[RMDB]
RNA sequence: GGGAACGACUCGAGUAGAGUCGAAAAAGCCUCAGGACCCCGUUCUGAAGCUGUUCGAGCUGAUCCAGCGGUUCAACGGCGCGAUGGGCCAGCUAGGGAUUCUGUAACGACGAGACGGGACGGCGUAGAGUGAAGGAGAAUUCGUUCUCCUUCACUCAAAAGAAACAACAACAACAAC
Reactivity to DMS in 0.01 (KOAc 150mM, MgCl2 10mM, bicine 150mM(pH8.5), 24C), signal-to-noise 6, nucleotides 027 to 126: a090g000c010c030u010c030a060g000g010a070c040c130c070c100g020u000u000c030u010g010a050a080g010c020u000g000u000u000c070g000a130g020c010u010g000a040u000c020c030a080g020c010g010g010u000u000c110a090a090c170g000g000c040g010c060g000a140u000g010g000g000c040c010a040g010c020u010a060g010g000g010a050u000u010c040u000g010u000a080a100c140g010a070c070g020a090g000a100c040g010g000g000a130c030g010g000c060g010u010a120
Reactivity to 2A3 in 0.01 (KOAc 150mM, MgCl2 10mM, bicine 150mM(pH8.5), 24C), signal-to-noise 3, nucleotides 027 to 126: a000g040c000c000u020c010a040g010g080a090c010c080c000c090g010u040u010c010u040g080a120a040g040c030u060g050u060u080c020g030a010g000c010u020g020a050u030c020c020a030g020c000g030g060u030u060c060a120a060c060g120g000c050g010c020g130a100u040g010g000g000c000c020a030g010c040u080a110g040g070g040a070u150u070c030u060g080u070a100a040c040g060a010c030g040a030g010a060c000g000g020g000a010c000g000g070c050g020u040a060

The record gives the reactivity of an RNA of 177 nucleotides to DMS and 2A3. Source: RMDB library OK2TST, as collected in RNAgym. The reactions ran in a buffer of 150 mM KOAc, 10 mM MgCl2 and 150 mM bicine (pH 8.5), at 24 C. For DMS, 8,724 sequencing reads were counted.